The record gives the reactivity of an RNA of 177 nucleotides to DMS and 2A3. It was measured as part of the RMDB libraries RFM100 and RFMREP. For 2A3 the reverse transcriptase was SuperScript II with manganese. Values cover nucleotides 27 to 126. The reactions ran in a buffer of 150 mM KOAc, 10 mM MgCl2 and 150 mM bicine (pH 8.5), at 24 C.
[RMDB]
RNA sequence: GGGAACGACUCGAGUAGAGUCGAAAAACGUUCCAUCAUCAGGCUCGGCGGAUAGUUGCCGGGUUUAUCCGUAUCAAGACACCCGGUCAAGACAGUUGAAGCUACUAACAGGGUGGCGACAGUAAGUAGAUAAUUGCAAAUUCGUUUGCAAUUAUCUAAAAGAAACAACAACAACAAC
Reactivity to DMS in 0.01 (KOAc 150mM, MgCl2 10mM, bicine 150mM(pH8.5), 24C), signal-to-noise 7, nucleotides 027 to 126: a150c120g020u000u000c000c000a110u020c100a070u000c110a090g010g000c020u000c020g010g010c010g000g000a100u010a090g020u010u020g020c010c000g010g000g000u000u000u020a040u000c050c030g000u010a080u020c150a100a100g000a080c140a040c010c000c010g000g010u010c110a070a070g020a070c160a090g010u000u000g010a090a150g000c010u000a040c040u000a100a110c200a090g030g000g010u000g000g000c010g010a120c080a080g000u010a060a070g010u010
Reactivity to 2A3 in 0.01 (KOAc 150mM, MgCl2 10mM, bicine 150mM(pH8.5), 24C), signal-to-noise 6, nucleotides 027 to 126: a000c040g010u040u030c020c000a070u070c040a010u040c050a040g050g000c000u000c020g040g010c030g010g060a070u070a140g130u120u140g010c000c000g000g010g000u020u020u010a010u000c010c010g070u060a040u260c080a070a030g060a030c030a020c030c000c000g040g000u080c050a030a040g120a070c040a050g010u040u050g090a110a020g020c020u030a040c010u050a110a140c030a130g140g020g000u010g020g010c020g010a010c000a010g100u170a210a010g020u010